[RMDB]
RNA sequence: GGGAACGACUCGAGUAGAGUCGAAAAGGGAUAGAUACCAAUGGGCUGCCUUACCUUGGGAAGUGAUCUAUGGAAGGAUAAAAAUGAAGGAUCAUAAGAGAAUACCUCAAAUAUUCUCUAAACCACAUAGCCUUAGGAUAUUCGUAUCCUAAGGCUAAAAAGAAACAACAACAACAAC
Reactivity to 2A3 in 0.01 (KOAc 150mM, MgCl2 10mM, bicine 150mM(pH8.5), 24C), signal-to-noise 2, nucleotides 027 to 126: g080g040g020a050u060a080g020a020u090a090c000c030a000a080u120g010g010g040c040u040g010c010c000u040u110a100c020c000u020u050g020g010g020a040a030g040u050g090a040u040c030u030a060u090g090g050a080a020g100g020a020u110a130a180a010a030a010u110g030a090a040g010g010a010u020c010a000u060a170a000g010a010g000a000a000u020a030c020c020u180c040a030a070a000u010a010u040u000c010u000c000u020a100a020a010c070c030a060c030a120
Reactivity to DMS in 0.01 (KOAc 150mM, MgCl2 10mM, bicine 150mM(pH8.5), 24C), signal-to-noise 4, nucleotides 027 to 126: g000g000g020a070u000a060g030a060u000a100c050c040a080a070u020g000g010g000c060u000g000c040c040u010u000a150c050c020u010u000g000g000g000a140a080g030u000g010a030u000c020u000a110u020g030g010a070a050g000g020a050u020a010a080a060a080a090u020g010a110a150g020g000a050u010c060a070u000a140a050g000a000g010a010a010u010a000c080c090u020c300a030a080a300u000a010u000u000c000u000c000u000a070a070a140c060c050a050c250a150
Chemical mapping of a 177-nucleotide RNA with 2A3 and DMS. DMS adducts were read by reverse transcription with MarathonRT. Reactivities are rounded to 0.1 and cut off at 0 and 3. The reactions ran in a buffer of 150 mM KOAc, 10 mM MgCl2 and 150 mM bicine (pH 8.5), at 24 C.